[RMDB]
RNA sequence: GGGAACGACUCGAGUAGAGUCGAAAAUGUCCGCCUUUCUCCCUUCGGGAAGCGUGGCUGCUCACGCUGUACCUAUCUCAGUUCGGUGUAGGUCGUUCGCUCCAAGCUGGGCUGUGUGCCGUUCAGCGUUUCACUACGGGUUCGCCCGUAGUGAAACAAAAGAAACAACAACAACAAC
Reactivity to DMS in 0.01 (KOAc 150mM, MgCl2 10mM, bicine 150mM(pH8.5), 24C), signal-to-noise 3, nucleotides 027 to 126: u020g010u020c000c020g020c060c050u000u000u000c040u000c010c020c070u010u000c110g010g000g010a090a060g000c040g020u010g030g000c110u010g000c060u000c020a050c050g010c010u000g010u000a050c020c010u000a120u000c030u010c040a060g010u000u000c060g020g010u000g010u010a200g000g010u000c060g000u000u010c130g020c080u000c040c010a030a230g010c000u000g000g000g000c020u000g020u020g010u010g010c170c300g000u000u000c020a080g000c080
Reactivity to 2A3 in 0.01 (KOAc 150mM, MgCl2 10mM, bicine 150mM(pH8.5), 24C), signal-to-noise 1, nucleotides 027 to 126: u060g050u020c000c030g050c040c030u070u150u010c020u020c060c060c000u050u050c040g030g010g000a030a000g030c040g050u040g040g000c050u110g010c010u060c030a010c020g000c020u000g010u000a040c030c010u080a070u040c040u000c020a060g000u040u000c000g040g000u040g060u050a050g000g060u010c020g010u100u160c080g010c090u000c010c000a000a090g020c010u040g020g020g010c020u010g020u010g030u040g050c000c030g010u070u040c030a000g010c000